[RMDB]
RNA sequence: GGGAACGACUCGAGUAGAGUCGAAAACUGGGCUAUGGAGACAUGUAUCCCAAGACGUGGUCUGGGAUGCUGGUUGGGGGACUGUGUGCCCUGGCUGGUGUGCUGACCAUUGCCAUGCCCGUGCCUGGCUACACUAUGGGUUCGCCCAUAGUGUAGCAAAAGAAACAACAACAACAAC
Reactivity to 2A3 in 0.01 (KOAc 150mM, MgCl2 10mM, bicine 150mM(pH8.5), 24C), signal-to-noise 6, nucleotides 027 to 126: c080u080g030g040g000c110u200a060u120g060g000a140g090a120c030a080u120g080u120a110u070c030c000c000a020a020g050a020c030g040u040g010g030u020c050u130g020g000g050a000u010g000c000u000g010g030u010u000g010g000g000g000g020a000c040u070g070u070g090u220g300c000c000c000u000g020g000c000u000g000g010u020g010u040g140c000u010g010a030c010c000a020u030u100g050c000c000a000u010g000c020c000c000g000u040g000c020c000u030g070
Reactivity to DMS in 0.01 (KOAc 150mM, MgCl2 10mM, bicine 150mM(pH8.5), 24C), signal-to-noise 2, nucleotides 027 to 126: c090u060g010g000g010c010u030a040u000g000g000a110g000a070c070a080u030g020u030a070u020c030c020c020a110a060g000a070c120g000u040g000g010u000c010u030g010g000g020a000u000g030c000u000g000g000u000u020g020g000g010g000g000a000c020u010g030u030g020u030g000c000c000c000u010g000g010c010u050g000g040u000g040u000g040c030u000g020a010c000c000a020u020u030g060c050c000a040u000g010c000c000c010g000u010g000c040c000u000g030